[RMDB]
RNA sequence: GGGAACGACUCGAGUAGAGUCGAAAAUAAAACCAUAUCUCAAAUCUAUCAUCCUAGUCAUCCAUUCUUUCUGGCAAGUUUUAGUCUUUGACAAAACAAUCCUAUUUAUUUCCCUUGAAAAUGGAAACCUCCACGAUCCGUUCGCGGAUUGUGGAGGAAAAGAAACAACAACAACAAC
Reactivity to 2A3 in 0.01 (KOAc 150mM, MgCl2 10mM, bicine 150mM(pH8.5), 24C), signal-to-noise 4, nucleotides 027 to 126: u050a000a130a020a040c040c030a080u090a230u120c100u020c070a120a200a060u020c020u070a110u070c050a030u040c010c020u080a030g040u060c040a030u000c070c010a040u070u050c040u030u100u030c020u030g070g000c030a060a110g030u010u000u030u090a040g000u020c020u060u130u180g050a010c000a010a050a010a010c020a000a020u010c020c000u040a080u030u140u020a080u020u050u020c030c010c000u050u110g170a080a060a000a000u080g010g000a030a040a080
Reactivity to DMS in 0.01 (KOAc 150mM, MgCl2 10mM, bicine 150mM(pH8.5), 24C), signal-to-noise 1, nucleotides 027 to 126: u000a020a110a100a240c020c030a100u020a110u000c030u000c020a070a060a070u030c090u010a030u030c040a110u000c010c020u000a070g020u060c050a100u000c030c030a060u000u010c060u000u120u000c030u000g000g010c030a020a020g000u000u000u000u000a130g000u000c000u070u070u040g110a050c020a000a000a000a000c040a000a030u000c020c000u000a070u020u050u020a090u020u000u000c010c010c020u000u000g000a020a000a050a110u010g030g000a070a060a040